[RMDB]
RNA sequence: GGGAACGACUCGAGUAGAGUCGAAAACUUCGGAUGCCCAGGUCGGACCGCGAGGAGGUGGAGAUGCCAUGCCGACCCGAAGAGGAAAGAAGGACGCGAGACGCAAACCUGUGAGUGGAUCCUCGCCCAUGUUGAAACGGUUCGCCGUUUCAACAUGAAAAGAAACAACAACAACAAC
Reactivity to 2A3 in 0.01 (KOAc 150mM, MgCl2 10mM, bicine 150mM(pH8.5), 24C), signal-to-noise 1, nucleotides 027 to 126: c010u040u030c030g080g000a040u120g060c010c010c000a030g060g000u050c020g000g050a070c030c000g000c050g000a050g000g020a030g000g000u000g040g020a100g010a060u200g000c020c020a070u190g000c000c010g040a080c000c010c010g020a040a020g040a060g130g080a110a070a010g090a010a010g060g000a030c040g070c040g070a090g020a050c010g040c010a000a100a100c040c020u120g020u100g110a050g040u070g010g000a070u030c030c000u010c010g040c010c010
Reactivity to DMS in 0.01 (KOAc 150mM, MgCl2 10mM, bicine 150mM(pH8.5), 24C), signal-to-noise 1, nucleotides 027 to 126: c030u000u000c040g000g020a200u010g030c010c000c000a110g010g010u000c020g010g000a110c060c030g010c030g010a080g010g020a070g000g030u010g020g010a150g000a140u000g000c050c040a040u020g020c000c040g010a040c000c010c050g030a030a080g000a140g030g000a040a070a110g010a130a040g000g030a130c070g020c070g000a060g010a080c080g010c080a020a060a110c040c030u000g020u000g010a030g000u000g000g000a110u000c010c000u000c030g000c050c160
The record gives the reactivity of an RNA of 177 nucleotides to 2A3 and DMS.
DMS (dimethyl sulfate) methylates the pairing face of unpaired adenines and cytosines.